[RMDB]
Conditions: 150 mM KOAc, 10 mM MgCl2 and 150 mM bicine (pH 8.5), 24 C. An RNA of 177 nucleotides, treated with DMS and read out base by base.

RNA sequence: GGGAACGACUCGAGUAGAGUCGAAAAGAUAUGGAGGCAUCCUGAGGCUGAAUUGUGCAUUCAACGUGUCGGAAACGACACGCGCAUUUGCACAAUUCAGCUACCCACCAGGAAUGCCUCCUAAGUCGUUUUCUAGUACCUUCGGGUACUAGAAAACAAAAGAAACAACAACAACAAC
Reactivity to DMS in 0.01 (KOAc 150mM, MgCl2 10mM, bicine 150mM(pH8.5), 24C), signal-to-noise 1, nucleotides 027 to 126: g000a250u000a300u000g000g030a040g040g030c000a010u000c010c000u000g000a110g000g000c010u000g000a030a010u000u000g010u010g000c000a030u030u000c300a110a150c000g030u000g100u030c010g000g000a160a180a180c060g010a000c000a000c000g040c130g000c300a240u000u000u000g070c000a000c000a000a010u000u000c010a000g010c030u000a030c050c030c030a300c110c000a010g000g000a160a090u000g040c000c000u000c000c010u000a000a000g000u000c140
Values cover nucleotides 27 to 126.